[RMDB]
Chemical mapping of a 177-nucleotide RNA with 2A3 and DMS.

RNA sequence: GGGAACGACUCGAGUAGAGUCGAAAAUUCAUUUUUGCUUCUUCCAUAGUCACUAUUAUAAAACUUCGGGUCUUAUUCUCAUAUGCCCCCGCAAGCGAGGGCCUGGUCGAUUAGUGAGACCAGGUGCUUCUACAUACCAGUUCGCUGGUAUGUAGAAAAAAGAAACAACAACAACAAC
Reactivity to 2A3 in 0.01 (KOAc 150mM, MgCl2 10mM, bicine 150mM(pH8.5), 24C), signal-to-noise 7, nucleotides 027 to 126: u090u040c040a070u020u020u030u080u160g050c020u040u030c010u070u020c020c030a090u070a060g050u040c020a010c090u050a030u260u060a110u150a110a110a050a040c040u070u060c010g020g000g000u000c000u030u100a070u100u010c040u010c020a040u050a050u200g020c010c000c000c000c020g040c070a090a070g050c020g060a060g010g060g000c000c000u000g000g010u010c010g050a080u070u120a090g080u080g140a040g000a030c000c000a000g000g000u000g000c000
Reactivity to DMS in 0.01 (KOAc 150mM, MgCl2 10mM, bicine 150mM(pH8.5), 24C), signal-to-noise 6, nucleotides 027 to 126: u010u030c100a090u010u010u010u010u000g010c040u010u000c020u000u000c040c030a060u010a090g020u000c030a050c040u000a040u020u020a110u020a080a080a090a070c050u010u020c030g010g000g010u000c010u020u010a110u010u000c040u000c040a100u020a060u020g010c030c030c010c000c010g030c160a080a090g010c120g000a050g020g000g010c000c000u000g010g000u000c010g020a180u010u020a060g020u020g010a200g000a010c000c000a000g000g020u000g000c070